[RMDB]
RNA sequence: GGGAACGACUCGAGUAGAGUCGAAAAGAAGUCGCUCUCUCUCGCCCUGUCCAUCCUCUCAGGCAUAGAGAUGACCAUUUGCCUAGGGUGAGUCUUUAAGUAGACACAGCCUAUCUAUGGUGAUGGAAUGGGGCACGGGUUUUAACACCCCCAUGACGUUAUGGAGUCUGUUCGCAGACUCCAUAACAAAAGAAACAACAACAACAAC
Reactivity to 2A3 in 0.01 (KOAc 150mM, MgCl2 10mM, bicine 150mM(pH8.5), 24C), signal-to-noise 3, nucleotides 027 to 156: g120a050a030g060u030c010g030c020u000c000u000c000u000c080u110c120g000c000c030c000u010g030u000c000c000a010u010c040c020u000c010u070c160a020g000g000c000a020u080a050g090a000g040a080u190g180a110c060c000a140u060u030u020g000c000c000u010a010g000g040g010u030g010a020g000u010c000u000u130u050a300a300g260u090a030g010a000c020a010c000a040g040c000c000u070a110u240c040u030a030u070g000g010u010g010a000u010g010g000a080a170u030g000g000g000g000c000a010c030g000g000g010u070u100u030u080a080a050c060a050c010c010c000c000c010a060u090g090a030c080